[RMDB]
RNA sequence: GGGAACGACUCGAGUAGAGUCGAAAACAGUAAAAGUGGCAACAGUGGUGAUUAACAGCCUGAUAGGGUGCUGCAGAGGCCCACUGUCUUGCUACUAAAGGUCUCUGCAGACGAUGAAAGACAUCGACAUCGGUAGCUGAUUCGUCAGCUACCGAUGAAAAGAAACAACAACAACAAC
Reactivity to 2A3 in 0.01 (KOAc 150mM, MgCl2 10mM, bicine 150mM(pH8.5), 24C), signal-to-noise 2, nucleotides 027 to 126: c030a010g020u110a020a090a030a000g100u070g030g000c020a030a030c020a050g000u020g000g110u080g110a130u090u140a060a110c040a050g020c010c000u020g090a100u080a250g050g040g000u090g050c020u000g000c000a000g000a000g060g010c000c000c000a020c030u000g020u010c090u090u200g020c070u010a010c020u010a010a010a010g000g000u000c000u000c010u030g000c000a000g000a020c020g000a000u000g020a050a000a000g060a010c000a030u000c000g020a020
Reactivity to DMS in 0.01 (KOAc 150mM, MgCl2 10mM, bicine 150mM(pH8.5), 24C), signal-to-noise 2, nucleotides 027 to 126: c120a090g000u040a060a020a070a020g070u000g020g020c130a070a080c060a050g030u000g000g010u030g000a050u050u000a090a110c090a130g050c010c010u000g000a160u030a020g000g030g080u020g000c000u000g000c030a000g000a000g000g000c000c000c060a300c100u010g000u000c120u030u000g010c110u010a040c100u000a010a110a110g000g010u030c000u000c010u000g000c010a010g000a080c060g000a000u000g020a030a130a240g030a180c040a040u000c010g010a300